Structure probing data (2A3 and DMS) for a 177-nucleotide construct. Conditions: 150 mM KOAc, 10 mM MgCl2 and 150 mM bicine (pH 8.5), 24 C. For 2A3, 2,969 sequencing reads were counted. For DMS the reverse transcriptase was MarathonRT. 2A3 adducts were read by reverse transcription with SuperScript II with manganese. It was measured as part of the RMDB library OK1LIB.
RNA sequence: GGGAACGACUCGAGUAGAGUCGAAAAGAAAGAAAGAAAAUAUCACUGAGAAUAUGUAGGUUACCUCGGUGAAUAUAAAGCCUACAUUACGACACGAGGAACAAAUAACCUCGUGUCGAAAAAGAAAACUCCUAUGAUGAUUCGUCAUCAUAGGAGUAAAAGAAACAACAACAACAAC
Reactivity to 2A3 in 0.01 (KOAc 150mM, MgCl2 10mM, bicine 150mM(pH8.5), 24C), signal-to-noise 4, nucleotides 027 to 126: g100a020a080a000g150a060a100a050g160a020a160a010a010u150a010u030c000a000c000u030g010a000g000a020a060u090a090u200g000u010a000g000g010u020u180a020c000c000u010c010g000g000u030g040a090a000u060a000u050a030a080a000g020c000c010u010a000c000a030u060u120a060c010g000a000c000a000c000g000a000g010g020a140a020c120a100a120a140u210a070a040c000c010u000c000g000u000g000u000c000g000a000a000a000a000a000g070a030a040a000
Reactivity to DMS in 0.01 (KOAc 150mM, MgCl2 10mM, bicine 150mM(pH8.5), 24C), signal-to-noise 3, nucleotides 027 to 126: g010a110a070a120g000a090a080a090g000a110a130a090a140u050a080u010c000a010c010u010g010a040g010a070a050u010a040u020g000u000a010g010g010u020u040a110c170c000u000c000g010g020u000g010a010a070u010a050u020a020a110a080g000c000c000u000a000c020a080u020u060a110c010g000a010c000a000c000g000a020g000g020a140a090c190a060a070a150u060a100a080c000c010u000c000g010u000g000u010c010g000a000a060a100a110a070g000a090a090a110